[RMDB]
This 170-nucleotide RNA was probed chemically with DMS and 2A3. The 2A3 profile rests on 1,172 reads. The reactions ran in a buffer of 150 mM KOAc, 10 mM MgCl2 and 150 mM bicine (pH 8.5), at 24 C. It was measured as part of the RMDB library 15KLIB.
RNA sequence: GGGAACGACUCGAGUAGAGUCGAAAAACAUAAGAUGGUUUUGUCUGUUUCUCCUUACGUUUGUAAUGCCCCUGGUUGUGGCGUUUCAGACGUUACUAAGCUAUAUUUAGGUGGUAUGAGCUACUUUCGAUCAUGCGCUUCGGCGCAUGAAAAAGAAACAACAACAACAAC
Reactivity to DMS in 0.01 (KOAc 150mM, MgCl2 10mM, bicine 150mM(pH8.5), 24C), signal-to-noise 2, nucleotides 027 to 129: a180c080a180u080a120a130g020a110u010g000g000u000u000u000u000g060u010c110u000g030u020u110u020c010u000c130c050u000u010a000c040g030u060u000u000g000u050a080a000u000g010c020c000c040c150u010g050g030u090u040g000u060g050g000c000g050u020u030u000c030a040g020a010c010g030u050u040a030c090u030a020a070g050c140u000a060u000a100u080u000u000a050g000g000u040g000g050u010a040u080g010a120g010c040u030a080c120u040u040u010c160g020a140
Reactivity to 2A3 in 0.01 (KOAc 150mM, MgCl2 10mM, bicine 150mM(pH8.5), 24C), signal-to-noise 1, nucleotides 027 to 129: a000c050a190u160a020a040g000a060u300g010g000u000u000u090u030g000u020c050u040g020u030u030u000c090u000c000c000u000u000a000c000g050u010u000u010g000u000a000a000u000g000c000c000c000c060u030g100g160u120u040g090u130g000g040c000g010u000u000u000c000a000g000a040c000g000u000u000a000c040u030a000a030g000c000u030a000u000a010u160u150u020a060g040g000u060g070g000u010a150u030g160a090g000c050u050a080c090u050u070u070c000g000a010